[RMDB]
RNA sequence: GGGAACGACUCGAGUAGAGUCGAAAAAGAUCACCAGUUCAUCUCGGCGUAUUUCGGCUUGGAGAAAAUAUACCGUCCUGCUCAGCGAUAAUGACCUCCAUGCUUGACGUAAGUACAUGGCAAAUUGCUAAUUCCUUUGGUUCGCCAAAGGAAUUAGAAAAGAAACAACAACAACAAC
Reactivity to 2A3 in 0.01 (KOAc 150mM, MgCl2 10mM, bicine 150mM(pH8.5), 24C), signal-to-noise 2, nucleotides 027 to 126: a000g080a060u040c030a030c090c010a030g020u070u060c030a090u000c030u000c060g060g000c030g050u060a100u020u080u020c020g040g000c040u030u080g060g010a030g060a040a050a010a040u160a010u000a040c000c040g020u040c020c010u020g000c020u010c050a020g030c010g050a030u050a110a100u090g060a020c000c010u000c000c000a020u010g000c000u060u080g050a070c070g000u000a050a050g000u020a050c020a060u020g000g000c050a000a070a140u110u070g030
Reactivity to DMS in 0.01 (KOAc 150mM, MgCl2 10mM, bicine 150mM(pH8.5), 24C), signal-to-noise 3, nucleotides 027 to 126: a100g010a090u000c010a140c040c010a090g010u010u000c070a060u000c030u000c070g020g010c010g020u010a070u000u010u000c050g010g000c040u010u000g000g000a080g000a050a060a040a070u020a090u010a070c070c020g000u000c030c020u000g020c030u000c040a090g000c050g000a070u010a040a070u010g020a130c120c030u000c020c020a060u010g000c050u000u020g020a040c100g010u000a020a060g020u000a070c090a060u010g010g000c110a040a070a130u000u020g010

Description
This 177-nucleotide RNA was probed chemically with 2A3 and DMS. The data come from the RNA Mapping Database (RMDB), library RFMREP. Reactivities are given for positions 27 through 126. For DMS, 2,737 sequencing reads were counted. Values are in units of 0.01, from 0 to 300, in steps of 10. For DMS the reverse transcriptase was MarathonRT. The reactions ran in a buffer of 150 mM KOAc, 10 mM MgCl2 and 150 mM bicine (pH 8.5), at 24 C.